[RMDB]
RNA sequence: GGGAACGACUCGAGUAGAGUCGAAAAUUUCGUCAUGUUUGAAGGUGCGCAGGGUACCCUGCUGGAUAUCGACCACGGUACUUAUCCGUACGUAACUUCUUCUAACACCACUGCAGGUGGCGUGGCGCCGUAGCAUCGGUUUCGACCGAUGCUACGGAAAAGAAACAACAACAACAAC
Reactivity to 2A3 in 0.01 (KOAc 150mM, MgCl2 10mM, bicine 150mM(pH8.5), 24C), signal-to-noise 3, nucleotides 027 to 126: u090u070u070c020g000u020c030a070u020g040u030u040u060g090a050a030g040g040u060g030c020g020c040a040g030g000g040u030a060c010c010c060u060g020c030u040g010g000a060u090a100u240c060g110a080c010c020a030c070g010g000u010a080c010u040u050a150u180c040c000g020u060a020c000g030u050a120a060c000u060u020c000u010u010c050u100a070a040c000a000c050c000a060c160u210g110c170a130g010g050u000g000g000c020g030u000g000g000c030g000
Reactivity to DMS in 0.01 (KOAc 150mM, MgCl2 10mM, bicine 150mM(pH8.5), 24C), signal-to-noise 2, nucleotides 027 to 126: u010u050u000c020g070u000c010a050u010g040u000u010u000g000a050a020g000g070u000g010c010g000c090a270g000g000g000u080a040c050c040c090u000g000c070u000g000g000a110u010a050u070c180g040a050c000c030a140c040g070g000u000a090c030u000u010a070u000c250c040g000u000a120c030g000u000a030a050c170u000u000c020u030u020c130u110a110a080c080a040c030c000a070c180u000g010c120a100g020g000u040g010g000c000g000u010g010g010c000g000